[RMDB]
RNA sequence: GGGAACGACUCGAGUAGAGUCGAAAAGCCAAAUUUAUAGGAGCUGUUCAGCCCUUGGAUUCAGUUUUCCUAGUGAUAAUGGCUUUCUGGCUUUUCAUCUAUUAUGAGUGGCUGCUUAUCACAAUACUGAGUUCAAGUAGUUCGCUACUUGAACUCAAAAAGAAACAACAACAACAAC
Reactivity to 2A3 in 0.01 (KOAc 150mM, MgCl2 10mM, bicine 150mM(pH8.5), 24C), signal-to-noise 7, nucleotides 027 to 126: g020c010c010a030a040a070u240u230u090a220u110a070g030g030a040g000c000u010g030u060u070c060a050g040c000c020c030u030u030g020g010a060u070u070c040a060g090u090u040u100u100c010c000u040a030g010u020g060a030u040a090a060u070g000g000c000u020u030u030c050u030g010g000c000u030u040u040u020c030a060u010c030u080a070u100u090a160u230g030a020g030u020g070g020c040u060g010c020u120u070a110u120c030a020c010a070a060u130a120c080
Reactivity to DMS in 0.01 (KOAc 150mM, MgCl2 10mM, bicine 150mM(pH8.5), 24C), signal-to-noise 3, nucleotides 027 to 126: g020c020c010a070a100a060u040u010u010a090u020a070g000g000a060g000c000u000g030u020u010c180a050g010c030c050c040u000u020g030g000a030u010u010c090a050g000u020u020u020u000c010c010u000a090g020u000g000a060u010a010a080u020g010g010c010u010u010u020c060u030g000g010c010u000u000u000u000c030a060u000c120u000a070u010u020a030u020g000a030g000u010g000g050c020u000g000c080u020u040a030u000c070a040c100a080a090u050a120c210